[RMDB]
An RNA of 177 nucleotides, treated with 2A3 and DMS and read out base by base. Source: RMDB library TTRDES, as collected in RNAgym. For DMS, 6,895 sequencing reads were counted.
RNA sequence: GGGAACGACUCGAGUAGAGUCGAAAAGAUAUGGACUCCCAUGUAGCAUCGAUCGUAGGUCGGAAACGACCUACGGGAGCUAGAUGGAGAGUCCUAAGUCAAAGCCAGAUACUUCGGUAUCUGGCAAGUAUCUAGUAUGCUUCGGCAUACUAGAUACAAAAGAAACAACAACAACAAC
Reactivity to 2A3 in 0.01 (KOAc 150mM, MgCl2 10mM, bicine 150mM(pH8.5), 24C), signal-to-noise 6, nucleotides 027 to 126: g030a020u080a040u160g000g000a000c010u000c000c040c070a010u200g150u060a000g000c070a250u300c080g130a040u050c000g020u010a000g000g000u010c010g000g040a080a090a000c020g010a010c000c000u000a000c000g000g010g000a000g010c000u000a020g040a210u010g000g020a290g000a000g300u020c000c000u000a050a000g000u000c060a130a060a040g010c010c000a000g010a000u010a000c010u050u170c300g190g000u010a000u010c000u000g000g000c000a010a000
Reactivity to DMS in 0.01 (KOAc 150mM, MgCl2 10mM, bicine 150mM(pH8.5), 24C), signal-to-noise 5, nucleotides 027 to 126: g010a050u000a300u000g000g000a020c000u000c010c010c000a020u000g000u000a010g020c010a300u000c180g020a070u020c000g010u000a010g010g010u000c000g010g000a090a070a260c010g030a010c000c000u000a000c010g010g000g000a030g030c020u000a010g000a010u000g010g010a150g000a010g010u000c000c000u000a000a050g010u000c040a110a170a190g000c000c000a000g000a010u000a000c000u000u010c220g030g010u000a010u000c000u010g000g000c000a000a010

For 2A3 the reverse transcriptase was SuperScript II with manganese.
Values cover nucleotides 27 to 126.
The RNA was probed in 150 mM KOAc, 10 mM MgCl2 and 150 mM bicine (pH 8.5) at 24 C.